[RMDB]
RNA sequence: GGGAACGACUCGAGUAGAGUCGAAAAGGUUAUGUAUAUAGCGACUUUAGGAAUUGUUGCAGGCUGAGAACGAGCGACUAAACGGUUUGGAGGAUAACUGAUUUAGGGACUUUCUUUAUACCUCUAUCUAUAAUAAGUUGUUCGCAACUUAUUAUAGAAAAGAAACAACAACAACAAC
Reactivity to 2A3 in 0.01 (KOAc 150mM, MgCl2 10mM, bicine 150mM(pH8.5), 24C), signal-to-noise 3, nucleotides 027 to 126: g070g000u100u080a060u130g090u010a130u020a010u090a290g020c020g040a060c010u120u100u150a100g070g120a140a100u130u190g040u090u100g010c020a010g000g020c000u030g040a000g010a080a060c090g020a010g040c020g020a040c020u040a050a030a010c020g010g030u020u050u120g100g030a100g040g020a030u040a060a040c010u030g030a180u080u030u080a050g050g000g030a020c030u090u090u040c040u070u140u050a110u110a110c030c000u010c020u060a040u050
Reactivity to DMS in 0.01 (KOAc 150mM, MgCl2 10mM, bicine 150mM(pH8.5), 24C), signal-to-noise 3, nucleotides 027 to 126: g010g010u010u010a050u000g000u000a100u010a080u000a090g010c030g010a080c070u010u000u000a100g020g000a100a090u010u010g010u000u000g010c040a070g010g010c070u000g000a080g010a030a080c130g010a070g010c040g000a210c050u010a030a040a030c040g000g000u000u000u000g020g020a130g000g010a100u010a030a040c030u000g010a100u000u000u000a030g010g000g010a150c060u000u000u000c030u000u000u020a070u010a110c040c020u000c040u000a110u000

Chemical mapping of a 177-nucleotide RNA with 2A3 and DMS. It was measured as part of the RMDB library RFMREP. The RNA was probed in 150 mM KOAc, 10 mM MgCl2 and 150 mM bicine (pH 8.5) at 24 C. Values cover nucleotides 27 to 126. The DMS profile rests on 3,088 reads.